Structure probing data (2A3 and DMS) for a 177-nucleotide construct. Reactivities are given for positions 27 through 126. Source: RMDB library M2PK50, as collected in RNAgym. The reactions ran in a buffer of 150 mM KOAc, 10 mM MgCl2 and 150 mM bicine (pH 8.5), at 24 C. For 2A3 the reverse transcriptase was SuperScript II with manganese.
RNA sequence: GGGAACGACUCGAGUAGAGUCGAAAAUCUAACUCAUUCGUGAGUUAGAGUGAGCGCAGGGACCAUUGGGCCGGUGGCGCGCUGUCGGUGCCGCGCGUGGCGAUAGUGCUUGCUUCGGCAAGCACAACCGAGGAAGCAGAUUCGUCUGCUUCCUCGGAAAAGAAACAACAACAACAAC
Reactivity to 2A3 in 0.01 (KOAc 150mM, MgCl2 10mM, bicine 150mM(pH8.5), 24C), signal-to-noise 1, nucleotides 027 to 126: u000c000u010a000a050c010u040c000a020u060u050c130g130u040g020a010g000u000u000a000g000a000g020u070g040a080g020c040g000c040a190g000g050g050a050c030c000a050u070u150g050g090g040c050c000g130g060u140g070g160c050g030c050g030c100u040g070u080c020g110g060u070g070c030c000g050c000g010c030g030u040g060g000c040g050a100u140a100g000u000g010c040u000u010g000c000u040u050c240g050g000c010a000a000g040c000a000c010a000a000
Reactivity to DMS in 0.01 (KOAc 150mM, MgCl2 10mM, bicine 150mM(pH8.5), 24C), signal-to-noise 2, nucleotides 027 to 126: u000c000u000a010a000c000u010c000a040u000u000c210g000u020g010a000g000u000u000a000g010a010g010u000g010a160g020c020g010c030a060g010g010g000a060c030c020a160u010u010g020g000g000c030c040g020g030u000g020g040c050g030c070g040c060u010g020u000c110g010g030u000g020c010c010g020c060g040c070g010u000g010g000c050g000a120u000a070g020u000g000c010u000u000g000c000u000u010c290g000g010c000a010a000g010c000a000c010a030a030